[RMDB]
RNA sequence: GGGAACGACUCGAGUAGAGUCGAAAAGAUCUUGACAAUUGCUUGUAUGUGGAAAGGAGAAAGAGUUUCAGGAAAAGUGUUGCUCAGGCUGUGCGUCAUAAGAUUGGCAAUUCCAAGAAGAAAGUGCCUGCGGAAUAAUAUUCGUAUUAUUCCGCAGAAAAGAAACAACAACAACAAC
Reactivity to 2A3 in 0.01 (KOAc 150mM, MgCl2 10mM, bicine 150mM(pH8.5), 24C), signal-to-noise 3, nucleotides 027 to 126: g010a060u030c020u040u020g020a010c020a040a080u120u050g010c010u040u070g040u140a120u060g070u020g000g050a070a050a070g090g040a060g070a040a110a030g040a060g020u030u060u080c050a040g000g070a070a060a060a050g020u050g060u070u050g010c000u020c020a010g010g020c010u040g030u050g080c030g020u000c000a020u070a120a080g080a120u050u100g020g030c010a000a050u050u000c010c000a060a040g060a050a010g070a030a160a060g130u180g040c040
Reactivity to DMS in 0.01 (KOAc 150mM, MgCl2 10mM, bicine 150mM(pH8.5), 24C), signal-to-noise 4, nucleotides 027 to 126: g020a110u010c030u000u000g010a050c120a060a070u000u000g010c040u010u010g020u000a060u000g020u000g010g000a060a100a110g000g000a100g000a060a090a090g000a090g010u000u000u010c050a080g020g010a060a070a070a150g020u010g010u000u000g010c030u000c060a070g010g000c040u000g010u000g000c090g020u000c040a030u000a070a040g010a100u000u000g010g010c050a040a070u000u000c040c030a050a080g000a090a110g000a060a060a090g010u000g010c180

The data come from the RNA Mapping Database (RMDB), library OK2TST. The record gives the reactivity of an RNA of 177 nucleotides to 2A3 and DMS. For DMS the reverse transcriptase was MarathonRT. For DMS, 4,735 sequencing reads were counted. For 2A3 the reverse transcriptase was SuperScript II with manganese. The RNA was probed in 150 mM KOAc, 10 mM MgCl2 and 150 mM bicine (pH 8.5) at 24 C.